[RMDB]
RNA sequence: GGGAACGACUCGAGUAGAGUCGAAAAUACGUACGGAUCCAUGGUACGAUCAUGGAUCCCAUGUAGACAUGGUCUAGAGUACUACAUGGCCAUGGAUCGACGGAUCUGAUCAUGCUAGCGGAUCUCAAUUAGGAGCCAGAUUCGUCUGGCUCCUAAUAAAAGAAACAACAACAACAAC
Reactivity to 2A3 in 0.01 (KOAc 150mM, MgCl2 10mM, bicine 150mM(pH8.5), 24C), signal-to-noise 1, nucleotides 027 to 126: u180a030c070g100u020a030c080g000g020a020u020c000c000a000u010g000g010u040a030c030g040a030u060c010a080u180g130g000a000u000c000c000c010a040u210g090u070a030g010a010c020a000u020g040g010u030c020u090a070g020a030g160u110a240c060u070a070c050a050u110g000g000c000c010a010u010g000g040a120u040c000g050a050c060g010g000a010u060c000u020g010a020u040c030a030u140g000c000u000a010g030c090g070g010a040u000c010u000c020a020
Reactivity to DMS in 0.01 (KOAc 150mM, MgCl2 10mM, bicine 150mM(pH8.5), 24C), signal-to-noise 3, nucleotides 027 to 126: u020a070c140g010u020a080c300g000g000a000u000c000c000a080u020g020g010u010a110c200g010a040u000c000a050u010g060g000a070u000c020c010c020a020u000g020u010a050g010a070c010a040u010g020g020u000c020u000a280g040a150g010u000a110c150u000a100c080a130u000g000g030c030c010a020u010g000g000a090u000c030g050a110c180g030g000a010u000c000u000g000a020u010c020a100u010g010c030u000a020g010c150g010g010a060u000c000u010c140a060

This 177-nucleotide RNA was probed chemically with 2A3 and DMS.
DMS (dimethyl sulfate) methylates the pairing face of unpaired adenines and cytosines.
Source: RMDB library OK2TRN, as collected in RNAgym.